[RMDB]
RNA sequence: GGGAACGACUCGAGUAGAGUCGAAAAAAUAUAUCGCCGAUCCCAACAAGAGAAAUAUUUUACUCGGUUUGGAUAAAGUCGGAGAUGUUGAAUGCGAUGCUAGAUUUGGGUUUUACUAUCGUAUUCACCAUACCGCAACCAAUCAAGGCGUCGACACGUUUGACUUUCUUUUCGAAGAAAGUCAAACAAAAGAAACAACAACAACAAC
Reactivity to DMS in 0.01 (KOAc 150mM, MgCl2 10mM, bicine 150mM(pH8.5), 24C), signal-to-noise 1, nucleotides 027 to 156: a040a030u010a070u010a040u010c020g020c010c010g010a120u030c050c010c030a030a070c000a170a120g010a050g000a210a090a140u000a080u000u060u000u000a190c020u000c010g010g040u000u010u000g010g010a110u000a010a070a110g020u010c000g010g020a080g020a000u000g020u000u000g010a060a050u000g000c020g040a090u000g030c100u000a160g000a060u000u040u000g000g020g050u000u000u000u000a080c060u010a000u000c010g000u000a020u000u000c020a040c060c030a080u000a090c060c020g010c060a080a150c000c020a080a110u000c060a010a280g020g000c000g030u010c040g020a070c120a120c150
Reactivity to 2A3 in 0.01 (KOAc 150mM, MgCl2 10mM, bicine 150mM(pH8.5), 24C), signal-to-noise 2, nucleotides 027 to 156: a000a000u250a060u050a050u070c020g000c030c000g000a030u010c030c000c040a010a000c010a070a100g020a000g070a020a180a010u220a130u060u210u130u140a120c000u000c010g030g020u010u020u000g000g010a000u010a130a160a040g030u120c010g000g010a300g000a110u000g010u040u000g000a020a000u010g000c000g050a010u000g070c080u080a090g030a230u150u120u230g150g080g040u140u160u020u130a060c080u050a000u020c010g000u010a000u000u010c000a000c020c010a000u020a040c000c020g050c000a000a040c030c020a010a120u160c080a160a020g000g000c000g030u090c030g020a050c010a010c150